RNA sequence: GGGAACGACUCGAGUAGAGUCGAAAAGUGCAAGAAGAAGCACAACCAGUAGAAGUACCUGUUGAAGAUAUUGCGCAGGUUGUCAUAGCUGACACCUUACAGGAAACUCCUGUUGUGCCUGAUACUGAUAGAGGUCGGUUCGCCGACCUCAAAAGAAACAACAACAACAAC
Reactivity to 2A3 in 0.01 (KOAc 150mM, MgCl2 10mM, bicine 150mM(pH8.5), 24C), signal-to-noise 3, nucleotides 027 to 129: g100u070g050c010a030a000g040a080a000g090a020a000g050c000a000c010a000a000c100c060a010g000u040a000g030a060a000g030u040a060c000c020u010g010u080u080g040a090a040g100a140u090a150u150u300g120c230g000c010a010g000g000u030u100g000u000c000a000u070a210g040c130u050g000a000c000a030c020c000u000u010a010c020a000g010g000a120a060a030c000u010c020c020u000g030u000u020g000u020g000c010c000u020g020a020u060a120c030u060g020a000u080a100
Reactivity to DMS in 0.01 (KOAc 150mM, MgCl2 10mM, bicine 150mM(pH8.5), 24C), signal-to-noise 3, nucleotides 027 to 129: g030u020g000c070a040a050g040a170a070g040a200a240g040c010a030c030a000a000c120c070a020g010u030a090g000a090a070g000u050a090c000c000u000g000u040u030g000a000a000g020a120u030a040u040u040g010c190g060c150a020g000g000u000u000g000u020c000a030u040a200g020c020u000g000a010c010a030c010c060u000u000a030c030a010g050g020a100a050a050c070u010c040c010u020g030u020u020g020u010g030c050c060u010g000a000u110a060c070u050g010a050u010a030
This 170-nucleotide RNA was probed chemically with 2A3 and DMS. For 2A3, 4,380 sequencing reads were counted. It was measured as part of the RMDB library 15KLIB. For DMS, 9,432 sequencing reads were counted. For DMS the reverse transcriptase was MarathonRT.